This 207-nucleotide RNA was probed chemically with 2A3 and DMS. The RNA was probed in 150 mM KOAc, 10 mM MgCl2 and 150 mM bicine (pH 8.5) at 24 C. The 2A3 profile rests on 1,284 reads. For DMS, 5,200 sequencing reads were counted. For 2A3 the reverse transcriptase was SuperScript II with manganese.
RNA sequence: GGGAACGACUCGAGUAGAGUCGAAAAUUUCAUGGAGCCUGGCUGUUUUAUUCAAUGUAUGUGUUUUAUUUCUACUAGGACAGAGUUCAUGAGAGGGUCAGUUUGUGACCCGUGCUUUCCGGCACAUGUGUUGUCCAAAGGGACACAGCCACACAUACCAGCAUUAGUGAUUCGUCACUAAUGCUGGAAAAGAAACAACAACAACAAC
Reactivity to 2A3 in 0.01 (KOAc 150mM, MgCl2 10mM, bicine 150mM(pH8.5), 24C), signal-to-noise 3, nucleotides 027 to 156: u040u020u030c030a020u070g040g030a040g080c000c030u010g020g030c010u020g070u040u110u150u120a130u150u180c100a100a090u070g010u090a060u020g040u060g040u020u160u040u060a150u070u160u000c030u070a090c010u050a010g010g000a030c040a030g040a010g070u110u070c010a010u050g020a020g020a090g110g010g000u000c010a070g050u040u210u270g090u080g000a000c010c000c020g000u010g000c000u060u150u060c040c000g010g020c000a000c010a030u050g040u010g020u130u040g000u000c000c030a180a090a040g070g010g000a000c020a010c000a080g020c010c000a030c010a000c000a030u050a060
Reactivity to DMS in 0.01 (KOAc 150mM, MgCl2 10mM, bicine 150mM(pH8.5), 24C), signal-to-noise 2, nucleotides 027 to 156: u000u000u010c030a070u000g020g020a100g030c020c020u010g030g020c010u020g020u010u000u000u020a050u030u000c060a100a110u000g030u000a030u000g010u000g000u010u010u000u010a060u000u010u010c030u000a100c040u000a140g020g000a060c010a050g010a100g000u010u000c010a050u000g010a110g010a110g020g020g040u010c000a070g050u000u030u010g020u010g000a020c010c000c020g040u000g000c020u000u000u000c140c090g020g000c040a110c090a080u000g020u020g030u000u010g000u010c030c020a060a110a170g000g020g020a040c070a040c070a080g010c020c060a040c040a040c040a100u010a190